[RMDB]
RNA sequence: GGGAACGACUCGAGUAGAGUCGAAAAGAACUUUGGCCGGCUCGGAAUAGAAUCAGGGGGUGCAAACUGCCCACUGGCAGAAAGGAUUAUAGCAAAUGCCUACCCUAUUGCAAUACAGCCCGGCCAACAUAGACUACUCUAUUCGUAGAGUAGUCAACACAUGGGAACUGUUCGCAGUUCCCAUGUGAAAAGAAACAACAACAACAAC
Reactivity to DMS in 0.01 (KOAc 150mM, MgCl2 10mM, bicine 150mM(pH8.5), 24C), signal-to-noise 1, nucleotides 027 to 156: g000a050a190c090u010u000u010g000g020c020c020g040g000c030u000c090g020g000a100a130u000a100g000a120a100u010c000a050g020g010g030g010g010u010g020c100a110a030a150c060u000g000c000c000c080a040c100u020g010g040c110a140g000a160a160a050g020g040a140u000u010a130u000a080g010c080a060a080a140u000g000c050c000u000a140c020c000c030u000a080u010u000g000c080a140a110u020a100c060a050g000c190c000c050g000g030c050c000a010a000c030a110u000a200g000a040c000u000a030c010u000c000u000a040u020u000c240g000u000a010g010a010g010u000a050g010u000c000a010a110
Reactivity to 2A3 in 0.01 (KOAc 150mM, MgCl2 10mM, bicine 150mM(pH8.5), 24C), signal-to-noise 2, nucleotides 027 to 156: g020a100a050c000u010u010u000g000g010c000c000g010g000c020u040c170g040g050a060a030u100a150g140a060a060u090c040a050g010g020g010g000g000u110g060c020a050a100a050c010u030g000c020c010c020a100c160u150g020g000c020a000g050a040a060a010g120g050a040u180u080a120u290a120g100c070a080a020a050u080g020c000c000u130a210c030c000c000u040a090u050u040g030c040a000a040u040a220c010a000g030c000c130c000g020g000c000c000a000a000c000a000u050a000g000a000c000u010a000c000u020c000u000a040u070u030c180g060u070a000g000a000g010u000a000g000u000c000a000a000